[RMDB]
RNA sequence: GGGAACGACUCGAGUAGAGUCGAAAAACGAGUGCGGCGUCGAUCGCGACGAGGUGCAGUCGCUCCUAUCGGACUUCGAGGAGAUCCCUGCCGACGAGAUCGAAGGCCGCUGGCUCGGGGCCCUCAAACGGGCGUGGAACGGGUACAAGGGAGCGACGUACUCUCAACUGUUCGCAGUUGAGAGUACAAAAGAAACAACAACAACAAC
Reactivity to 2A3 in 0.01 (KOAc 150mM, MgCl2 10mM, bicine 150mM(pH8.5), 24C), signal-to-noise 2, nucleotides 027 to 156: a000c020g000a000g000u080g010c000g000g020c000g110u000c000g020a050u040c080g000c090g170a030c020g060a120g060g060u240g030c030a030g050u170c050g000c020u000c030c030u160a300u150c060g120g080a220c060u300u080c110g020a010g020g050a060g030a090u020c090c020c040u030g040c000c000g060a060c010g000a010g000a040u010c010g000a000a000g130g000c020c000g000c000u010g020g030c000u000c000g000g030g000g040c000c080c000u060c050a130a130a110c110g000g000g010c010g000u120g010g050a180a080c090g030g010g040u110a020c040a040a100g010g010g010a000g000c060g040a060c080